[RMDB]
RNA sequence: GGGAACGACUCGAGUAGAGUCGAAAAGGUAGUAAACAGAAAUAAUGGCACAUGUUUUAAACAUGUGAUCGGAACGAAUGGUUUCUAAAUAAAACCAUGAAAGCAAUUGGAGGGCAAGUCUGGUGCCCUGGCACUGACUAUUCGUAGUCAGUGCCAGAAAAGAAACAACAACAACAAC
Reactivity to 2A3 in 0.01 (KOAc 150mM, MgCl2 10mM, bicine 150mM(pH8.5), 24C), signal-to-noise 4, nucleotides 027 to 126: g080g060u110a010g030u040a010a090a080c020a050g150a050a060a020u180a090a070u150g030g000c000a000c010a010u000g110u030u070u040u260a110a230a000c000a010u010g000u020g020a080u070c010g050g060a050a130c070g050a050a030u050g000g010u000u000u030c060u100a050a080a110u200a010a020a000a000c000c010a000u020g080a100a030a000g050c070a030a130u070u170g050g040a040g010g010g000c020a100a030g040u020c040u060g050g000u030g020c020c000
Reactivity to DMS in 0.01 (KOAc 150mM, MgCl2 10mM, bicine 150mM(pH8.5), 24C), signal-to-noise 5, nucleotides 027 to 126: g000g020u000a080g010u000a040a090a120c060a070g000a090a120a060u020a090a130u060g010g000c000a020c000a000u000g000u000u030u030u020a050a070a020c000a000u000g010u000g000a040u010c020g020g020a110a060c140g010a100a020u010g000g000u000u000u010c050u010a050a100a100u050a120a030a020a010c010c000a010u010g000a130a070a130g020c130a080a110u020u030g000g000a070g000g000g020c030a050a070g000u010c030u020g000g020u000g020c030c020